Source: RMDB library POS240, as collected in RNAgym. Chemical mapping of a 307-nucleotide RNA with DMS and 2A3. Reactivities are given for positions 27 through 266. DMS adducts were read by reverse transcription with MarathonRT.
RNA sequence: GGGAACGACUCGAGUAGAGUCGAAAACAUCUGACGUGAGUCAGAUGAGCUAAGCUUCGGCUUAGCAGUGGAGUUCUUCGGAACUCCACACCAUCCGCUUCGGCGGAUGGAACAAGACGGUGACGUCUUGAGGUCGGCUCGUGAGAGCCGACCAAGUCAGACUUCGGUCUGACACUACGGUCUUCGGACCGUAGAACAGCUGCUUCGGCAGCUGAGGGAAACGGAGUGCGCGGCACCGUCCGCGGAACAAACGGAGAAGGCAGCUUAGCGGAAUGUUCGCAUUCCGCAAAAGAAACAACAACAACAAC
Reactivity to DMS in 0.01 (KOAc 150mM, MgCl2 10mM, bicine 150mM(pH8.5), 24C), signal-to-noise 1, nucleotides 027 to 266: c000a000u010c000u030g000a010c000g010u010g010a250g020u000c010a000g000a020u000g010a150g000c000u000a010a000g000c020u010u060c220g000g020c000u000u000a000g000c000a080g040u000g000g010a040g000u010u000c000u000u040c280g010g000a000a020c000u000c000c020a000c000a050c010c000a020u000c000c000g010c000u010u040c280g040g040c000g000g000a000u000g000g010a140a260c010a000a000g000a040c000g000g010u030g000a230c000g000u000c000u010u000g010a120g060g060u000c050g010g000c010u000c030g000u000g000a300g020a040g010c000c010g100a000c020c000a020a040g000u010c010a010g000a020c000u000u000c140g020g010u010c010u000g010a000c040a060c010u010a000c010g000g000u020c000u000u010c140g040g010a040c000c000g020u010a000g000a270a240c040a000g020c000u000g000c000u000u010c280g020g020c000a010g000c000u000g000a000g000g010g000a090a040a110c080g000g040a100g040u000g000c020g050c000g020g000c040a040c130c110g020u010c000c020g000c010g010g010a090a150c100a010a020a020c070g010g000a070g000a160a060g010g000c160a110g000c020u000u010a290
Reactivity to 2A3 in 0.01 (KOAc 150mM, MgCl2 10mM, bicine 150mM(pH8.5), 24C), signal-to-noise 2, nucleotides 027 to 266: c000a000u000c000u010g010a000c010g120u140g070a070g010u000c000a000g000a010u010g000a010g000c000u000a000a000g000c000u020u150c270g090g000c000u000u000a000g010c000a010g000u010g000g000a000g000u030u030c030u090u070c300g060g000a000a000c000u010c000c000a000c000a000c000c000a000u000c000c000g020c030u040u040c190g110g000c000g000g010a000u000g010g000a000a020c010a000a000g000a000c000g000g080u060g050a050c000g000u000c020u000u000g020a030g000g000u000c010g000g030c020u010c000g020u050g050a170g000a000g060c010c000g010a000c010c000a000a020g010u020c010a000g000a000c000u030u160c270g060g000u000c010u000g000a000c000a000c000u000a000c000g000g000u000c000u020u040c110g100g000a000c000c000g000u000a000g000a040a010c000a000g000c000u000g000c000u060u070c130g120g000c000a010g000c000u000g030a100g030g060g040a060a070a060c060g050g030a060g080u110g090c070g000c000g030g020c040a060c110c030g130u170c000c030g000c020g030g110a000a000c010a040a090a010c010g040g040a040g070a070a060g080g050c040a020g200c060u150u190a010